[RMDB]
RNA sequence: GGGAACGACUCGAGUAGAGUCGAAAACGCUGGCGGCACGCGCUGGAGCACCACCGCGAGGAACCGCGACGCGGUCGCGGCGGCGUGGACAGCGCUGCUACUUUCGUCGCGAACGGCCUUGCUGGAGCCACGGCCGACUAUUCGUAGUCGGCCGUGGAAAAGAAACAACAACAACAAC
Reactivity to DMS in 0.01 (KOAc 150mM, MgCl2 10mM, bicine 150mM(pH8.5), 24C), signal-to-noise 1, nucleotides 027 to 126: c170g000c000u000g000g000c000g000g000c080a020c270g000c180g010c000u010g000g000a300g020c070a080c000c000a110c050c000g150c000g000a230g040g000a030a040c050c010g010c000g010a050c220g010c300g000g000u000c050g030c010g030g000c060g000g000c040g000u000g000g000a300c080a030g000c000g000c000u010g000c000u030a150c010u000u010u000c000g040u000c010g030c000g040a090a070c110g020g020c000c000u000u000g010c020u060g090g000a220g000
Reactivity to 2A3 in 0.01 (KOAc 150mM, MgCl2 10mM, bicine 150mM(pH8.5), 24C), signal-to-noise 2, nucleotides 027 to 126: c020g000c060u150g040g000c020g050g000c020a080c170g000c000g000c000u030g010g020a040g100c020a020c060c010a030c000c020g000c000g030a070g030g170a100a050c040c020g000c070g040a150c180g010c000g060g000u030c010g000c000g000g000c020g030g000c000g020u000g030g190a050c020a000g010c000g010c000u000g020c000u010a040c000u100u140u130c030g050u010c010g000c010g020a060a020c010g060g000c000c010u010u130g040c020u090g050g040a050g010